[RMDB]
Conditions: 150 mM KOAc, 10 mM MgCl2 and 150 mM bicine (pH 8.5), 24 C.
This 207-nucleotide RNA was probed chemically with DMS and 2A3.
High DMS reactivity at an A or C suggests that its Watson-Crick edge is free.
Values cover nucleotides 27 to 156.
It was measured as part of the RMDB library OK3TST.
For DMS the reverse transcriptase was MarathonRT.
RNA sequence: GGGAACGACUCGAGUAGAGUCGAAAACAGCUGUUCCUGGCCUAGGGAGGAGCCAGAACCCCCAACCAAUAGUUAUGAGGAUGGUGAUGCGAGCCUUGGGUCCUCCCUAACAUGGCUACUGUGUUACAGAAGCCAUAUCCAAGGCAGUGUCAUCUGACACUGCCUAGCAUUUCGAUGCUAGGCAGUGAAAAGAAACAACAACAACAAC
Reactivity to DMS in 0.01 (KOAc 150mM, MgCl2 10mM, bicine 150mM(pH8.5), 24C), signal-to-noise 2, nucleotides 027 to 156: c030a040g040c070u010g000u010u000c060c020u000g010g000c030c020u000a090g020g020g000a050g060g020a120g050c010c020a060g000a080a060c050c010c010c010c030a130a200c070c050a060a140u000a150g000u000u000a090u000g010a130g030g000a150u000g020g000u000g010a050u000g020c050g010a150g000c040c000u000u000g000g020g020u000c000c040u010c000c010c000u000a040a040c060a070u000g010g000c010u000a100c050u000g010u000g020u010u010a150c030a030g020a190a060g000c020c000a050u000a030u000c030c030a020a040g030g000c010a170g000u000g020u000c010a040u000c010u000g010a300
Reactivity to 2A3 in 0.01 (KOAc 150mM, MgCl2 10mM, bicine 150mM(pH8.5), 24C), signal-to-noise 3, nucleotides 027 to 156: c050a040g120c090u100g000u080u060c080c010u010g000g010c010c010u030a010g020g010g010a000g000g000a000g000c000c000a010g040a110a110c010c030c070c030c020a020a040c020c050a050a110u120a200g080u210u150a130u260g120a060g100g010a020u070g030g000u000g000a010u020g000c010g020a040g010c000c010u010u000g000g000g000u000c000c010u000c030c000c000u000a000a040c020a000u020g000g000c000u030a060c000u020g030u030g110u260u280a010c000a010g000a040a000g010c000c000a020u000a010u000c000c000a000a010g010g000c000a000g000u020g010u010c000a000u010c020u010g040a020